This 177-nucleotide RNA was probed chemically with 2A3 and DMS. 2A3 adducts were read by reverse transcription with SuperScript II with manganese.
[RMDB]
RNA sequence: GGGAACGACUCGAGUAGAGUCGAAAAUCAAGGCCUUCGCGCCCGUGCGCAUCAUUUGGUCGGGGUAGCGGCCCCUCCCGAUGCAUACGGGGUCGCUCCAGGCGCCGAUGGGAUACGGCGGGUGCUCAACUGGGAGAUCAUUCGUGAUCUCCCAGUUAAAAGAAACAACAACAACAAC
Reactivity to 2A3 in 0.01 (KOAc 150mM, MgCl2 10mM, bicine 150mM(pH8.5), 24C), signal-to-noise 6, nucleotides 027 to 126: u160c050a040a040g140g030c020c030u120u160c100g000c000g000c000c010c000g010u120g170c010g000c020a030u020c000a010u030u030u230g050g000u090c110g000g000g000g090u100a020g010c000g000g010c000c000c000c000u120c030c020c030g130a150u220g050c110a060u110a180c110g000g010g000g000u000c000g000c000u000c000c010a050g070g030c060g000c030c010g010a000u010g070g100g020a050u040a120c010g000g000c000g000g000g010u010g000c030u020c020
Reactivity to DMS in 0.01 (KOAc 150mM, MgCl2 10mM, bicine 150mM(pH8.5), 24C), signal-to-noise 3, nucleotides 027 to 126: u020c190a100a110g000g030c020c040u040u040c140g000c050g000c030c030c010g020u000g050c040g040c300a020u000c000a130u000u010u000g030g010u020c050g010g000g010g050u030a010g020c000g010g010c000c000c000c000u000c060c030c100g000a100u040g020c110a070u030a060c200g010g000g000g030u010c000g020c000u010c040c020a080g000g000c110g000c050c010g010a010u000g000g010g000a020u010a040c000g000g000c020g000g000g010u010g010c000u010c180
Description
DMS adducts were read by reverse transcription with MarathonRT. It was measured as part of the RMDB library RFM100. Values are in units of 0.01, from 0 to 300, in steps of 10. The reactions ran in a buffer of 150 mM KOAc, 10 mM MgCl2 and 150 mM bicine (pH 8.5), at 24 C.